[RMDB]
RNA sequence: GGGAACGACUCGAGUAGAGUCGAAAACUUAUUGGAGAGCCAGGUGUUGGUAAAACUGCUAUUGCUGAAGGUUUAGCGCAAGCCAUAGUGAAUAAUGAGGUACCAGAGACAUUAAAAGAUAAGCGUGCGAACGGGAAUUUUUCGAAAUUCCCGUUCGAAAAGAAACAACAACAACAAC
Reactivity to 2A3 in 0.01 (KOAc 150mM, MgCl2 10mM, bicine 150mM(pH8.5), 24C), signal-to-noise 2, nucleotides 027 to 126: c000u090u040a030u040u300g100g000a050g000a000g110c000c010a030g000g000u050g040u160u090g040g020u080a100a040a040a060c080u060g010c000u020a020u110u030g030c060u090g070a120a090g070g020u060u140u200a090g060c020g000c030a010a010g000c030c000a000u010a000g000u040g110a080a000u070a070a050u160g060a000g160g010u000a010c000c000a010g040a000g000a030c000a000u140u210a110a040a060a000g010a000u050a020a150g200c050g090u050g030
Reactivity to DMS in 0.01 (KOAc 150mM, MgCl2 10mM, bicine 150mM(pH8.5), 24C), signal-to-noise 2, nucleotides 027 to 126: c060u000u020a080u030u020g000g060a070g000a170g010c040c120a040g020g030u010g050u000u080g020g000u000a060a020a070a170c120u020g020c070u000a070u020u020g030c020u010g010a140a190g010g010u020u010u010a170g010c040g040c140a080a040g000c050c000a050u010a010g020u000g010a040a060u010a020a110u030g010a050g000g020u020a030c020c010a040g010a100g030a090c070a030u040u000a030a060a070a010g000a130u000a040a110g030c050g010u010g000